RNA sequence: GGGAACGACUCGAGUAGAGUCGAAAAGUACUAUCACCAUCGUGCCCAAUUGCCGUGUCAUUUAUAUGGUUGGGCACUAGGAUGGCUGUGUAAAUGACGCGUAGUAUCUAUCCGAUGGUGAUGGUAGGCUUCACUUAGAUUUCGAUCUAGGUGGAGCAAAAGAAACAACAACAACAAC
Reactivity to DMS in 0.01 (KOAc 150mM, MgCl2 10mM, bicine 150mM(pH8.5), 24C), signal-to-noise 8, nucleotides 027 to 126: g010u000a010c000u000a000u000c000a010c000c000a010u000c000g010u000g010c030c030c040a060a060u030u030g020c050c080g010u010g010u000c020a020u010u010u010a030u010a040u010g010g010u000u000g000g010g010c020a030c060u020a040g010g010a050u010g010g000c040u000g010u000g010u010a030a020a030u000g000a020c020g010c010g010u010a080g010u010a060u020c050u020a050u010c040c010g000a010u010g000g010u000g000a000u000g000g010u000a010g010
Reactivity to 2A3 in 0.01 (KOAc 150mM, MgCl2 10mM, bicine 150mM(pH8.5), 24C), signal-to-noise 9, nucleotides 027 to 126: g040u000a000c000u000a000u000c000a000c000c000a000u010c020g030u050g020c010c010c010a030a080u100u120g050c020c020g040u030g020u060c030a030u010u060u090a120u040a020u080g050g000u040u020g020g010g000c000a010c010u010a010g010g020a030u010g020g000c010u010g010u010g010u070a030a080a100u100g030a030c040g000c010g030u040a040g030u020a120u080c040u050a050u020c030c010g000a000u010g010g000u000g000a000u000g000g000u000a010g040